Notes
Conditions: 150 mM KOAc, 10 mM MgCl2 and 150 mM bicine (pH 8.5), 24 C. An RNA of 177 nucleotides, treated with 2A3 and DMS and read out base by base. 2A3 adducts were read by reverse transcription with SuperScript II with manganese. For DMS, 2,917 sequencing reads were counted. Source: RMDB library TTRDEL, as collected in RNAgym.
RNA sequence: GGGAACGACUCGAGUAGAGUCGAAAAGAUAUGGAUUAUGAACUACCUCUUGCCUAUGAAGAAGUUCGGAAACGAACUUUGGAGGCAGUUGGCAUAAUCCUAAGUCAAACACAGGUUCGCCUGUGAAGGGUAUUAAAGAGUUCGCUCUUUAAUACCCAAAAGAAACAACAACAACAAC
Reactivity to 2A3 in 0.01 (KOAc 150mM, MgCl2 10mM, bicine 150mM(pH8.5), 24C), signal-to-noise 3, nucleotides 027 to 126: g020a000u070a020u130g000g010a000u010u000a020u030g040a110a080c060u090a090c180c040u060c070u100u150g000c000c010u300a300u210g010a030a020g020a010a000g000u000u020c010g000g040a050a050a020c000g000a000a000c000u010u000u000g010g000a000g000g000c010a000g030u030u060g050g000c010a000u010a020a000u000c000c000u020a080a020g020u000c040a070a110a030c000a010c010a010g040g020u090u130c250g120c110c010u020g010u020g010a030a050
Reactivity to DMS in 0.01 (KOAc 150mM, MgCl2 10mM, bicine 150mM(pH8.5), 24C), signal-to-noise 3, nucleotides 027 to 126: g020a020u000a300u010g000g010a020u000u000a000u000g010a110a050c100u000a300c050c020u010c040u000u000g020c030c000u000a270u000g010a100a130g000a010a000g010u000u000c010g010g000a050a040a150c000g010a000a000c000u000u000u000g010g010a010g020g020c000a000g000u000u010g000g000c000a000u000a000a010u000c000c000u000a030a100g000u000c020a140a120a200c020a010c000a000g000g000u000u020c260g010c000c000u000g010u000g000a070a050